[RMDB]
RNA sequence: GGGAACGACUCGAGUAGAGUCGAAAAGACAGAAGUCUCACUAUGUUGCCCAGGUAGGCCUUGUAACUAGCUCCAUGGGUUUUUGGGUGAGAUAACAUGUGAAGGUUUGCCUGAGCUCCUGGUAGCUUGAAAGCAGUCAGUGAGUGUUAGCUAUCGACGAUAUUUACUCAUUCGUGAGUAAAUAUCGAAAAGAAACAACAACAACAAC
Reactivity to DMS in 0.01 (KOAc 150mM, MgCl2 10mM, bicine 150mM(pH8.5), 24C), signal-to-noise 3, nucleotides 027 to 156: g000a080c040a070g000a130a240g000u000c000u000c040a060c030u010a090u000g020u010u000g000c000c000c010a040g020g040u000a030g020g000c000c010u000u000g040u030a120a130c110u010a100g030c030u000c020c020a110u000g010g010g020u020u000u010u010u000g010g000g040u000g000a100g010a060u000a060a100c030a140u000g010u040g020a070a120g020g020u000u000u000g010c010c000u000g010a140g010c000u010c020c020u000g020g020u000a100g040c020u010u010g020a080a130a120g030c020a210g000u000c030a060g010u000g030a160g000u000g000u000u000a130g020c010u000a180u010c010g010a300
Reactivity to 2A3 in 0.01 (KOAc 150mM, MgCl2 10mM, bicine 150mM(pH8.5), 24C), signal-to-noise 4, nucleotides 027 to 156: g070a000c050a030g130a130a040g090u020c010u020c020a020c020u090a070u170g080u050u110g030c010c010c010a010g050g000u070a030g020g040c040c030u080u080g070u100a110a100c090u060a080g030c020u050c060c020a170u060g010g090g000u050u050u020u120u120g110g010g010u060g020a060g020a040u100a040a030c050a020u110g030u020g090a070a050g060g000u060u090u070g030c010c010u030g020a000g020c000u030c000c010u010g040g030u040a050g010c010u060u120g140a130a070a010g040c020a010g070u170c000a020g010u030g150a040g000u060g090u090u060a020g000c020u040a030u190c080g060a050
An RNA of 207 nucleotides, treated with DMS and 2A3 and read out base by base. The 2A3 profile rests on 3,766 reads. Values cover nucleotides 27 to 156. For 2A3 the reverse transcriptase was SuperScript II with manganese. The reactions ran in a buffer of 150 mM KOAc, 10 mM MgCl2 and 150 mM bicine (pH 8.5), at 24 C.